[RMDB]
RNA sequence: GGGAACGACUCGAGUAGAGUCGAAAAGUAAAAUCCAUGUAUUGCGACAAACCAGACGAUAUAAGCAAUGGUUUUAUCACAGAGUUAAUGGAAAAAUAUGAAAUUGGAAAACUAAUAGAAUAUACAUGCAAUACAGAUUACGCAUUAAUUGGGGAUAGUAUGUGUCGAUUUUCGAAUCGACACAUACAAAAGAAACAACAACAACAAC
Reactivity to 2A3 in 0.01 (KOAc 150mM, MgCl2 10mM, bicine 150mM(pH8.5), 24C), signal-to-noise 3, nucleotides 027 to 156: g040u030a040a060a010a060u040c020c030a000u060g020u010a000u010u020g020c020g030a010c100a030a050a000c000c000a000g020a080c080g040a090u060a030u100a300a030g080c050a030a080u030g010g040u000u000u090u110a130u110c070a070c050a090g050a030g140u060u120a080a030u070g010g020a070a010a010a030a070u110a070u110g090a070a160a080u090u070g010g020a060a140a050a090c040u100a020a100u090a140g060a070a010u160a010u060a160c050a050u130g010c010a000a010u020a000c000a000g040a030u010u080a030c060g010c060a050u120u100a050a070u110u190g000g020g000g010a020u020a080
Reactivity to DMS in 0.01 (KOAc 150mM, MgCl2 10mM, bicine 150mM(pH8.5), 24C), signal-to-noise 1, nucleotides 027 to 156: g040u000a040a120a080a150u020c010c050a100u000g000u010a090u000u000g070c030g020a070c040a020a010a100c010c010a110g040a130c020g010a090u000a150u010a240a150g050c070a160a250u000g010g000u000u000u000u000a070u000c000a100c030a060g020a120g070u000u000a080a080u000g010g040a000a110a120a060a190u000a050u000g000a050a060a100u010u000g010g000a030a060a100a190c030u000a020a110u010a140g010a180a070u000a080u000a080c030a070u000g030c040a030a050u000a270c050a060g000a110u000u000a100c040g010c050a080u000u000a080a130u000u000g000g040g020g020a120u000a160